Structure probing data (DMS and 2A3) for a 207-nucleotide construct. 2A3 adducts were read by reverse transcription with SuperScript II with manganese. Reactivities are given for positions 27 through 156.

RNA sequence: GGGAACGACUCGAGUAGAGUCGAAAAGCAUUGUCUUCGGACAAUGCAAAAAGAUAUGGAAUUGAGAAGCUUUUGACGCAAUACUGGUCGGAAACGACCAGAUUGCGAUAAGCUUCUUCAAUUCCUAAGUCAAAAAAGAGAGCGUUCGCGCUCUCAAGGUUAGAUAAGACUUCGGUCUUAUCUAACCAAAAGAAACAACAACAACAAC
Reactivity to DMS in 0.01 (KOAc 150mM, MgCl2 10mM, bicine 150mM(pH8.5), 24C), signal-to-noise 1, nucleotides 027 to 156: g030c000a020u020u000g010u000c000u010u010c300g130g000a020c010a000a000u010g010c000a020a040a010a110a080g030a060u010a300u000g010g000a040a010u000u000g000a070g000a020a050g000c000u000u000u020u020g010a270c070g040c000a010a010u000a100c000u000g040g000u000c010g000g010a150a100a250c020g000a010c000c010a010g000a030u000u000g040c000g030a030u000a040a010g000c010u000u000c000u010u000c000a030a020u000u000c000c000u010a010a070g040u010c040a000a060a050a130a040a100g000a030g000a030g000c000g000u010u000c140g080c030g010c010u010c000u000c000a030a140
Reactivity to 2A3 in 0.01 (KOAc 150mM, MgCl2 10mM, bicine 150mM(pH8.5), 24C), signal-to-noise 3, nucleotides 027 to 156: g000c000a000u000u000g000u010c010u020u060c280g030g000a000c000a000a000u000g000c000a000a000a040a000a020g010a000u050a000u100g000g000a010a000u010u000g010a000g000a000a000g010c020u060u090u150u290g200a190c010g000c010a000a030u140a250c020u020g000g000u000c000g020g030a030a090a110c010g000a000c000c000a000g000a000u000u000g010c010g000a000u000a000a010g020c000u000u000c000u000u000c000a000a000u000u010c000c000u000a010a000g020u010c030a000a000a040a130a090a040g080a000g000a030g000c020g010u080u090c180g020c000g040c100u000c010u030c010a010a010